The record gives the reactivity of an RNA of 207 nucleotides to DMS and 2A3. The 2A3 profile rests on 4,644 reads. For 2A3 the reverse transcriptase was SuperScript II with manganese. The reactions ran in a buffer of 150 mM KOAc, 10 mM MgCl2 and 150 mM bicine (pH 8.5), at 24 C.
RNA sequence: GGGAACGACUCGAGUAGAGUCGAAAAUCCAGGGCUACUUUCCGCUCUGAGAGACAGCAGGCACUAUGGUUAAGAGCAUGGCCUUGGAGUCUGACUUUGUGGGAUUCGGUCCUGGUUUACCACUUAGUAGCUAAGGAAGUCCCAUCCUCACAAUAGGUCUGCUCAAUAGAUUCGUCUAUUGAGCAGAAAAAGAAACAACAACAACAAC
Reactivity to DMS in 0.01 (KOAc 150mM, MgCl2 10mM, bicine 150mM(pH8.5), 24C), signal-to-noise 3, nucleotides 027 to 156: u000c030c000a040g000g000g050c000u000a070c080u000u010u010c090c040g060c010u010c030u010g000a130g000a170g030a070c070a160g010c070a100g000g030c090a110c020u010a050u000g020g020u000u010a130a170g000a190g020c050a130u000g010g040c050c020u020u020g010g000a180g000u000c070u000g000a220c010u000u000u000g030u000g020g030g020a070u000u000c090g030g010u000c020c010u000g010g020u000u000u010a070c030c040a130c110u010u000a060g020u010a090g000c020u010a100a070g000g010a100a190g010u000c020c010c010a260u010c010c030u010c050a090c070a060a110u010a120g010g000
Reactivity to 2A3 in 0.01 (KOAc 150mM, MgCl2 10mM, bicine 150mM(pH8.5), 24C), signal-to-noise 6, nucleotides 027 to 156: u020c000c000a000g000g000g010c010u030a030c060u120u080u030c040c020g030c020u030c040u070g100a150g000a000g020a070c030a020g070c020a010g020g050c060a040c130u140a070u150g090g040u130u140a150a040g040a030g090c020a040u060g010g000c000c000u040u060g050g020a020g030u010c030u010g080a170c040u000u030u050g010u020g020g000g010a010u050u090c140g040g020u010c000c010u010g000g030u000u040u030a030c010c010a030c010u030u020a040g050u090a020g170c090u090a070a050g010g020a060a050g090u030c010c000c000a020u040c010c010u070c020a080c020a070a140u050a140g040g020